[RMDB]
RNA sequence: GGGAACGACUCGAGUAGAGUCGAAAAAUUGCCACUGAGCACCACCGCGGAGCCGUUGCUGAUCGCCAGCCCAUUCAUCGCAACACACGACGGCCUUGUAUGGUCCAAACCCGACCGAGGGAUCAGCUAGUAGCGAGUGAUUCGUCACUCGCUACUAAAAAGAAACAACAACAACAAC
Reactivity to 2A3 in 0.01 (KOAc 150mM, MgCl2 10mM, bicine 150mM(pH8.5), 24C), signal-to-noise 3, nucleotides 027 to 126: a000u180u120g040c060c020a130c110u070g050a000g020c010a030c010c000a050c000c060g050c060g030g010a020g030c020c000g030u040u070g030c030u030g030a070u020c030g030c030c000a020g000c000c000c000a020u080u050c010a040u080c040g020c050a090a090c030a060c030a000c120g080a020c010g080g010c020c000u030u040g080u040a100u160g030g000u010c000c010a030a080a060c020c010c040g030a070c000c030g020a100g030g000g000a050u030c000a010g080c010
Reactivity to DMS in 0.01 (KOAc 150mM, MgCl2 10mM, bicine 150mM(pH8.5), 24C), signal-to-noise 2, nucleotides 027 to 126: a040u000u000g000c030c040a080c180u000g040a070g010c080a070c020c050a020c030c010g000c070g000g000a050g000c050c000g000u000u020g010c050u000g000a060u000c030g040c050c020a190g010c070c000c010a120u000u000c060a090u000c050g000c090a010a050c060a100c140a100c070g000a090c060g000g010c050c000u000u000g000u010a080u000g040g050u000c000c130a050a090a150c080c010c040g040a120c020c000g000a090g010g010g000a090u030c000a020g030c110

This 177-nucleotide RNA was probed chemically with 2A3 and DMS. It was measured as part of the RMDB library OK1LIB. For DMS, 2,220 sequencing reads were counted. For DMS the reverse transcriptase was MarathonRT. 2A3 adducts were read by reverse transcription with SuperScript II with manganese. The RNA was probed in 150 mM KOAc, 10 mM MgCl2 and 150 mM bicine (pH 8.5) at 24 C. The 2A3 profile rests on 2,221 reads.